Overview
The record gives the reactivity of an RNA of 207 nucleotides to 2A3 and DMS.
[RMDB]
RNA sequence: GGGAACGACUCGAGUAGAGUCGAAAACGCGACUGCUACGGCUAGGCGGACCGCUCCAGGCUGGCAACAGAGCAGGGAAUAGCUGACGCUCAGACUGACUAGCAAGACUGCAGAUGUAGCUUGAACCCGCUUCGACUUGAACUACAUUGUACCCACCCAAUCUGAUGUAGUUCGCUACAUCAGAUUGAAAAGAAACAACAACAACAAC
Reactivity to 2A3 in 0.01 (KOAc 150mM, MgCl2 10mM, bicine 150mM(pH8.5), 24C), signal-to-noise 6, nucleotides 027 to 156: c060g010c030g040a080c040u060g000c010u080a030c050g060g010c020u050a050g060g040c040g020g040a090c040c070g020c020u000c020c020a040g050g000c010u020g020g010c010a040a050c030a090g060a030g040c070a100g030g020g050a050a070u080a080g010c010u040g080a050c040g020c000u040c040a020g020a080c020u050g030a040c040u100a040g030c040a040a030g030a080c020u050g000c070a020g040a210u100g050u080a000g000c000u010u030g030a040a050c020c010c010g010c010u030u020c010g040a060c000u010u060g030a080a050c000u100a040c030a080u040u080g010u090a090c010c000c010a030c010c020
Reactivity to DMS in 0.01 (KOAc 150mM, MgCl2 10mM, bicine 150mM(pH8.5), 24C), signal-to-noise 2, nucleotides 027 to 156: c060g010c020g040a170c060u010g010c010u000a030c030g010g020c010u010a100g000g030c010g020g010a130c050c050g010c010u000c060c030a050g000g000c010u000g000g050c050a100a140c040a100g010a050g020c010a080g000g030g010a090a080u000a100g000c020u000g020a160c050g010c000u000c020a180g030a190c000u000g020a100c060u000a120g030c030a080a130g020a160c030u000g020c060a080g000a060u010g010u000a070g090c020u000u000g000a270a170c030c020c000g010c120u000u000c000g010a050c010u000u010g020a060a090c030u010a040c070a100u000u000g030u020a110c030c000c000a110c300c000

The reactions ran in a buffer of 150 mM KOAc, 10 mM MgCl2 and 150 mM bicine (pH 8.5), at 24 C. For DMS the reverse transcriptase was MarathonRT. The data come from the RNA Mapping Database (RMDB), library ARCHII.